[RMDB]
RNA sequence: GGGAACGACUCGAGUAGAGUCGAAAACACAAUGUGCGCCAUUAACAUUGUUUAUGCAAGCACGUUUCGCAAUGUACGGUGCAGAAACAUUGCCAACACAAAUACGCUUCACGAUGUGCGGCACAGAAAAAGCUCGCGCACUUCGGUGCGCGAGCAAGUAAGGAGGGUACUUCGGUACCCUCCUUACAAAAGAAACAACAACAACAAC
Reactivity to 2A3 in 0.01 (KOAc 150mM, MgCl2 10mM, bicine 150mM(pH8.5), 24C), signal-to-noise 1, nucleotides 027 to 156: c030a010c030a040a250u100g000u010g000c000g080c010c030a050u150u170a100a040c050a110u140u100g110u140u210u060a150u150g000c070a000a000g060c070a030c070g000u000u000u000c030g050c000a000a000u010g000u030a050c140g030g020u180g090c060a050g140a000a050a000c000a000u000u010g020c030c030a100a040c050a070c020a160a170a000u220a050c120g000c020u050u070c050a040c020g010a040u010g080u110g040c130g050g030c020a000c000a050g170a010a050a020a000a000g000c000u000c000g000c060g040c000a000c000u000u000c090g010g040u050g050c000g020c080g000a000g010c020a000a000